[RMDB]
Chemical mapping of a 177-nucleotide RNA with 2A3 and DMS. For DMS the reverse transcriptase was MarathonRT. 2A3 is a SHAPE reagent: it acylates the 2'-hydroxyl of flexible nucleotides of all four kinds. For 2A3, 3,547 sequencing reads were counted. Values are in units of 0.01, from 0 to 300, in steps of 10. 2A3 adducts were read by reverse transcription with SuperScript II with manganese. For DMS, 14,769 sequencing reads were counted.
RNA sequence: GGGAACGACUCGAGUAGAGUCGAAAAUAGUUAGCGCGUGGGAUUGCGCCUAAUUUGGCGGGUCGGCGCGCUUGUUUGGUUAUGUCAUGGCGUUAACGGUCAUGUACGUUGACGGUCAAGUUAGGCGGAAUAUUUAAAUUUUCGAAUUUAAAUAUUCAAAAGAAACAACAACAACAAC
Reactivity to 2A3 in 0.01 (KOAc 150mM, MgCl2 10mM, bicine 150mM(pH8.5), 24C), signal-to-noise 5, nucleotides 027 to 126: u140a030g150u100u080a020g000c000g000c010g020u040g050g240g030a060u030u180g250c000g000c000c000u120a220a300u220u160u180g000g000c010g050g000g000u000c000g000g000c000g020c000g010c010u010u040g010u000u090u090g090g000u090u080a030u090g040u030c050a060u050g030g000c020g020u050u060a030a010c020g000g060u100c120a090u160g060u070a000c010g000u000u020g010a010c040g020g050u060c030a010a050g010u030u070a060g020g020c080g000
Reactivity to DMS in 0.01 (KOAc 150mM, MgCl2 10mM, bicine 150mM(pH8.5), 24C), signal-to-noise 4, nucleotides 027 to 126: u030a060g020u020u020a020g010c000g010c010g050u000g010g030g020a020u000u000g020c000g040c010c000u010a090a100u020u040u010g010g010c000g010g000g020u000c000g010g010c000g010c020g030c010u010u000g010u020u010u020g020g000u010u030a060u020g010u010c040a100u010g000g000c010g020u000u010a030a050c110g000g010u020c070a100u020g010u020a030c010g010u000u000g010a030c020g000g010u020c010a040a110g000u010u020a080g000g030c110g000